RNA sequence: GGGAACGACUCGAGUAGAGUCGAAAAACACAAUUGAAAAGUCAAUUGGCUUCUGCGCAGCCCGGUGAUGUGAAGACCUUGGCCAGUUUGGGCAUCACACAAGAUAUCAAAGGCAAACUGACAAUAGUCUAAGUGUCGUGUUCGCACGACACUUAGAAAAAGAAACAACAACAACAAC
Reactivity to 2A3 in 0.01 (KOAc 150mM, MgCl2 10mM, bicine 150mM(pH8.5), 24C), signal-to-noise 1, nucleotides 027 to 126: a000c080a020c020a060a050u060u150g080a160a110a040a020g160u030c010a010a080u030u030g020g060c060u120u000c000u060g020c040g040c000a010g010c000c010c050g000g020u040g000a060u030g000u030g040a030a070g040a030c000c010u050u080g040g060c010c000a030g000u030u050u080g060g060g000c010a020u020c010a030c010a010c000a000a000g030a090u070a020u130c070a080a070a000g050g030c020a070a030a050c080u100g040a040c070a060a110u060a130g050
Reactivity to DMS in 0.01 (KOAc 150mM, MgCl2 10mM, bicine 150mM(pH8.5), 24C), signal-to-noise 2, nucleotides 027 to 126: a100c080a130c040a060a060u000u000g020a040a150a130a140g010u000c010a040a040u010u000g010g000c070u000u000c090u010g020c140g030c050a130g020c030c020c030g000g000u000g000a050u000g010u010g000a080a080g000a090c050c040u000u010g000g030c020c020a050g000u000u000u000g000g000g010c060a060u000c020a010c070a090c130a050a030g030a080u020a090u020c110a050a010a050g000g000c110a040a020a060c040u020g000a030c100a080a120u000a070g000
Source: RMDB library OK2TST, as collected in RNAgym. An RNA of 177 nucleotides, treated with 2A3 and DMS and read out base by base. 2A3 adducts were read by reverse transcription with SuperScript II with manganese. The 2A3 profile rests on 1,102 reads. The reactions ran in a buffer of 150 mM KOAc, 10 mM MgCl2 and 150 mM bicine (pH 8.5), at 24 C. For DMS the reverse transcriptase was MarathonRT.